[RMDB]
Conditions: 150 mM KOAc, 10 mM MgCl2 and 150 mM bicine (pH 8.5), 24 C. Chemical mapping of a 170-nucleotide RNA with DMS and 2A3. Values cover nucleotides 27 to 129. For DMS the reverse transcriptase was MarathonRT. For 2A3, 16,368 sequencing reads were counted.

RNA sequence: GGGAACGACUCGAGUAGAGUCGAAAAACUGGGAGAAGAGAGGCGAAGAAAAGAAGGGGAGUCCCCGAUCGAAUGUCCAUAGGCAGAGAAACCUCUGGAGUCCUCUAGACCGCAAGGAGGAAAUUACUAACCCAGAUGUUCGCAUCUGGGAAAAGAAACAACAACAACAAC
Reactivity to DMS in 0.01 (KOAc 150mM, MgCl2 10mM, bicine 150mM(pH8.5), 24C), signal-to-noise 8, nucleotides 027 to 129: a090c070u050g030g020g010a090g020a040a040g000a090g040a060g030g020c020g020a100a040g010a040a080a060a080g000a070a050g020g030g040g000a020g010u020c040c030c010c060g030a030u030c050g060a060a060u070g020u030c040c090a090u060a050g020g030c030a060g040a070g040a080a090a140c040c010u010c000u000g010g010a090g000u000c030c020u000c010u000a110g030a100c080c050g040c090a110a080g000g000a040g010g030a060a050a030u040u030a100c200u040a100a250
Reactivity to 2A3 in 0.01 (KOAc 150mM, MgCl2 10mM, bicine 150mM(pH8.5), 24C), signal-to-noise 6, nucleotides 027 to 129: a000c020u030g000g020g010a080g000a090a010g030a020g000a020g040g020c070g040a020a010g030a030a090a010a000g080a040a030g000g010g000g010a020g010u020c040c020c000c010g020a050u060c030g030a070a050u100g040u050c000c010a030u070a060g020g000c060a010g030a010g060a150a060a050c010c010u010c020u030g020g000a030g040u020c000c010u000c030u020a050g040a070c040c030g040c060a030a030g000g000a000g000g050a040a010a000u170u090a050c060u040a020a030